[RMDB]
An RNA of 177 nucleotides, treated with DMS and 2A3 and read out base by base. The RNA was probed in 150 mM KOAc, 10 mM MgCl2 and 150 mM bicine (pH 8.5) at 24 C. For DMS the reverse transcriptase was MarathonRT. For 2A3, 9,969 sequencing reads were counted.
RNA sequence: GGGAACGACUCGAGUAGAGUCGAAAAGACGCCUGUGUGGCGAAGCGAGCAUGAGAAAGAGCCGCACAGUCCAUCUAAUAUAAAGCGGCAAGAUGGAUUGCUCGCUAAAAGAUCCAUCACACUGAGAAUACGCAUAUAUGUUCGCAUAUAUGCGUAUAAAAGAAACAACAACAACAAC
Reactivity to DMS in 0.01 (KOAc 150mM, MgCl2 10mM, bicine 150mM(pH8.5), 24C), signal-to-noise 7, nucleotides 027 to 126: g020a120c150g010c040c000u000g010u000g020u010g010g000c080g010a110a070g000c000g000a010g020c000a030u000g000a300g010a050a110a110g000a240g020c020c000g000c000a110c150a070g000u010c110c100a070u030c090u050a090a090u040a070u040a070a100a100g010c020g000g010c030a060a060g000a170u020g000g000a110u010u000g010c010u000c010g010c010u020a020a040a080a080g010a110u010c050c010a030u020c030a030c080a090c080u010g020a150g000a140
Reactivity to 2A3 in 0.01 (KOAc 150mM, MgCl2 10mM, bicine 150mM(pH8.5), 24C), signal-to-noise 7, nucleotides 027 to 126: g060a010c040g040c030c000u040g010u020g030u060g050g010c030g020a010a000g010c000g000a010g000c010a030u100g020a030g130a140a160a020g160a030g020c010c010g030c020a040c040a040g050u010c010c000a070u040c030u100a140a130u140a090u090a200a160a020g040c020g060g010c060a050a020g050a040u040g000g000a000u010u030g010c000u010c010g000c000u010a010a010a000a020g040a040u020c020c000a010u050c000a020c010a020c070u100g050a040g050a190